[RMDB]
RNA sequence: GGGAACGACUCGAGUAGAGUCGAAAAGCAGGCUCAGUGUUGACGCAAGUUGGCUCGGUGCUGGGCGGUAUUUUACUGCUGAUUUUAUGUGCCGCCUGGUUGGUGCGCCGCUUAGGUUUUGCGCCACCAGAAUGAGGCUAUUCGUAGCCUCAUUCUGAAAAGAAACAACAACAACAAC
Reactivity to DMS in 0.01 (KOAc 150mM, MgCl2 10mM, bicine 150mM(pH8.5), 24C), signal-to-noise 6, nucleotides 027 to 126: g020c020a040g000g020c030u000c030a070g010u000g010u000u000g010a030c060g020c140a070a120g010u000u000g010g010c010u000c040g000g020u000g010c020u000g000g000g010c000g010g010u000a010u000u000u000u010a110c050u000g000c040u010g000a130u000u000u010u010a130u020g010u000g000c000c020g000c030c000u010g010g010u000u010g020g010u000g020c060g000c010c030g010c230u010u010a090g010g010u000u000u000u010g020c010g000c020c020a060c140
Reactivity to 2A3 in 0.01 (KOAc 150mM, MgCl2 10mM, bicine 150mM(pH8.5), 24C), signal-to-noise 4, nucleotides 027 to 126: g030c010a000g040g070c020u020c050a020g010u020g050u110u080g040a030c050g020c050a040a110g080u100u090g120g010c000u030c050g040g070u080g000c010u030g000g000g000c030g010g000u040a060u010u200u080u100a060c030u020g060c030u030g070a120u080u050u050u110a120u140g020u040g000c000c010g020c010c020u030g040g020u060u090g040g050u040g010c020g010c020c020g000c040u080u160a090g080g020u050u050u130u170g030c000g000c000c000a030c010
Structure probing data (DMS and 2A3) for a 177-nucleotide construct. The reactions ran in a buffer of 150 mM KOAc, 10 mM MgCl2 and 150 mM bicine (pH 8.5), at 24 C. It was measured as part of the RMDB library OK2TST. DMS adducts were read by reverse transcription with MarathonRT.